The record gives the reactivity of an RNA of 177 nucleotides to DMS. The reactions ran in a buffer of 150 mM KOAc, 10 mM MgCl2 and 150 mM bicine (pH 8.5), at 24 C. It was measured as part of the RMDB library M2PK90. Reactivities are given for positions 27 through 126.
RNA sequence: GGGAACGACUCGAGUAGAGUCGAAAAAACACGUGGGAACGGCCCAGUGGGGGGGAGAGGGACACGCCCUGGGCUCUGCCCAGGGUGCAGCCGGACUGACUGAGCCCCUGUGCCGCCCCCAGAUAAAUAGCUAAGACUAGUUCGCUAGUCUUAGCUAAAAAGAAACAACAACAACAAC
Reactivity to DMS in 0.01 (KOAc 150mM, MgCl2 10mM, bicine 150mM(pH8.5), 24C), signal-to-noise 1, nucleotides 027 to 126: a100a050c070a030c090g050u000g020g000g010a120a040c050g000g000c000c040c040a090g000u000g020g020g010g000g000g000g020a110g030a130g010g020g000a060c050a280c060g000c000c000c000u000g010g010g040c010u060c230u000g020c010c000c000a000g000g010g090u000g020c040a020g010c010c010g020g000a220c160u000g000a020c060u000g000a300g030c000c000c000c000u010g030u000g020c030c020g000c060c000c000c000c010a020g000a120u010a030a070a080